[RMDB]
RNA sequence: GGGAACGACUCGAGUAGAGUCGAAAAUAGUUGAUUCGUCAACUAAAAAAAACCUUUGUGGUCCACGGAGCGACGAUCUGGACGGGAACCCAUUGGGUUCCUACCAGGGAGCUCUCGUGUGGACCACUCUGGUAAAAAAGCAAGCUUCGGCUUGCAAUAACUGAAAAAUAUUCGUAUUUUUCAGUUAAAAAGAAACAACAACAACAAC
Reactivity to 2A3 in 0.01 (KOAc 150mM, MgCl2 10mM, bicine 150mM(pH8.5), 24C), signal-to-noise 3, nucleotides 027 to 156: u070a010g000u000u000g020a020u110u030c160g060u030c050a020a010c080u160a030a000a060a100a000a000a050a000c010c020u020u000u000g000u000g000g010u000c000c010a010c010g020g010a000g000c010g200a300c000g000a050u000c000u000g070g050a200c110g030g020g000a000a000c020c000c080a300u170u300g000g020g000u000u000c010c010u000a010c000c000a000g020g000g010a000g000c000u000c010u060c020g100u080g000u020g110g010a000c000c000a000c000u010c000u000g000g010u050a170a000a000a000a030a060g000c000a000a000g000c010u040u300c300g150g000c010u000u000g000c000a000a010
Reactivity to DMS in 0.01 (KOAc 150mM, MgCl2 10mM, bicine 150mM(pH8.5), 24C), signal-to-noise 1, nucleotides 027 to 156: u020a030g030u000u000g000a060u010u000c240g040u010c020a020a040c020u000a010a000a000a080a050a060a100a110c000c000u000u010u000g020u010g030g020u000c010c020a010c000g020g000a000g030c020g000a100c200g020a110u000c010u000g010g030a090c080g000g010g000a000a000c010c000c010a300u000u000g030g020g010u000u000c020c000u010a010c020c010a020g000g030g010a170g010c000u000c000u000c060g000u040g050u000g010g000a010c000c000a010c010u010c040u010g000g010u000a000a010a100a120a040a120g030c000a000a000g000c030u000u020c300g070g000c010u000u000g010c020a020a030